[RMDB]
RNA sequence: GGGAACGACUCGAGUAGAGUCGAAAAGCGUACUACUCGAGGUUUAUGGGAGUCAUGGGCACUCGCUGUCCCAAAUAGGACAGCGUUGCCAGCAUGACAUCGAUCAUAAACUACCCACCGAGUAUCGCAAACUAAUCGUUCUUCGGAACGAUUAGAAGUCUCUUCUAAAGUUCGCUUUAGAAGAGACAAAAGAAACAACAACAACAAC
Reactivity to DMS in 0.01 (KOAc 150mM, MgCl2 10mM, bicine 150mM(pH8.5), 24C), signal-to-noise 2, nucleotides 027 to 156: g020c010g000u000a070c090u000a000c010u030c000g020a120g040g000u000u000u010a000u000g020g000g010a180g010u000c010a000u000g020g010g030c010a020c150u020c020g050c000u000g000u010c000c010c020a040a140a240u010a070g000g000a030c000a010g010c020g040u000u020g010c000c000a130g020c010a030u000g010a020c000a080u000c100g000a130u010c020a020u000a020a010a030c020u000a030c020c000c050a300c110c000g000a060g040u000a010u000c020g020c020a110a080a240c010u000a000a000u000c000g010u000u000c000u000u000c300g050g000a000a010c010g000a020u000u000a000g020a070a140
Reactivity to 2A3 in 0.01 (KOAc 150mM, MgCl2 10mM, bicine 150mM(pH8.5), 24C), signal-to-noise 5, nucleotides 027 to 156: g020c010g040u090a070c020u010a000c000u020c010g010a030g030g020u000u000u010a020u010g010g010g010a060g000u000c000a000u000g010g000g000c010a020c080u090c020g000c000u000g000u010c020c010c010a140a180a140u300a050g000g000a000c000a000g000c000g000u000u010g000c000c010a010g110c000a000u000g010a020c020a070u090c020g080a130u080c000a010u010a010a000a000c010u060a070c050c060c020a040c010c030g010a010g010u010a030u300c020g000c030a050a050a030c000u000a000a000u000c000g000u010u000c000u020u030c120g130g010a010a000c000g000a000u000u000a000g000a020a000
Notes:
Chemical mapping of a 207-nucleotide RNA with DMS and 2A3. 2A3 adducts were read by reverse transcription with SuperScript II with manganese. For DMS the reverse transcriptase was MarathonRT. The data come from the RNA Mapping Database (RMDB), library RNAMAK. For 2A3, 8,367 sequencing reads were counted.